[RMDB]
RNA sequence: GGGAACGACUCGAGUAGAGUCGAAAACCAAGGGCGAGUCGACCUCUCCAUCGGCACGAGGACGUGCCUGGUUUUGAGUGGGGGAGGAUGUUACGGACAAAUUCCGUAACCGUGUGAGGCCAACAUCGAAGAUGCGUACCAAGCUGCGUUUCUACCUACUCAUAAAUAUGUUCGCAUAUUUAUGAGUAAAAGAAACAACAACAACAAC
Reactivity to 2A3 in 0.01 (KOAc 150mM, MgCl2 10mM, bicine 150mM(pH8.5), 24C), signal-to-noise 5, nucleotides 027 to 156: c010c010a060a090g030g010g010c040g020a050g020u040c020g040a090c010c000u000c010u000c010c010a110u130c050g010g020c020a010c020g040a180g260g080a130c050g020u010g020c000c010u010g040g000u050u070u140u220g120a120g030u140g010g030g000g010g000a010g010g020a030u090g010u010u010a010c000g010g020a040c170a120a210a100u250u000c000c000g000u010a000a010c000c020g000u060g050u060g080a050g000g090c030c010a020a020c020a110u140c030g050a070a030g040a060u070g050c010g040u080a290c030c010a070a030g050c050u100g020c060g000u020u000u000c020u030a070c000c020u000
Reactivity to DMS in 0.01 (KOAc 150mM, MgCl2 10mM, bicine 150mM(pH8.5), 24C), signal-to-noise 1, nucleotides 027 to 156: c020c020a130a170g000g030g000c020g000a060g040u000c020g030a090c030c030u010c030u010c030c050a090u000c040g020g020c000a060c000g000a110g040g000a300c050g000u000g000c020c020u050g010g040u010u000u020u000g020a150g000u000g020g010g020g030g020a120g030g010a120u000g030u000u020a010c020g000g030a100c060a120a040a210u050u000c000c000g010u000a000a020c010c000g130u010g000u000g000a140g000g040c000c040a090a060c020a080u000c000g010a160a110g000a070u000g020c040g050u020a200c020c020a040a300g050c050u010g000c010g000u010u000u010c020u000a190c220c010u000
The record gives the reactivity of an RNA of 207 nucleotides to 2A3 and DMS. It was measured as part of the RMDB library VIROID. The reactions ran in a buffer of 150 mM KOAc, 10 mM MgCl2 and 150 mM bicine (pH 8.5), at 24 C. The DMS profile rests on 2,450 reads.